Conditions: 150 mM KOAc, 10 mM MgCl2 and 150 mM bicine (pH 8.5), 24 C. This 177-nucleotide RNA was probed chemically with 2A3. For 2A3, 340 sequencing reads were counted.

[RMDB]
RNA sequence: GGGAACGACUCGAGUAGAGUCGAAAACGGUACCGGCCGGGGUGGCCGGAGAGUUGUACAUUGCCGGUGCGGGCGUCGGUGUUGGGUAUUGGCGUCGGGCGGGGCUGACCGCGUCACGGUUUGUGGCCGUCUCGCAAUCGUUCGCGAUUGCGAGACGAAAAGAAACAACAACAACAAC
Reactivity to 2A3 in 0.01 (KOAc 150mM, MgCl2 10mM, bicine 150mM(pH8.5), 24C), signal-to-noise 1, nucleotides 027 to 126: c000g000g100u130a040c050c020g000g000c020c020g300g000g000g300u270g030g000c010c000g040g000a000g000a000g010u020u070g060u000a090c100a120u160u120g000c000c000g010g000u070g000c060g000g000g010c090g060u020c000g000g070u000g000u080u290g020g050g000u130a230u050u200g000g000c020g000u170c010g000g030g000c000g050g000g020g010c080u120g060a000c030c000g070c000g000u000c010a040c080g040g040u080u090u110g000u020g030g000c000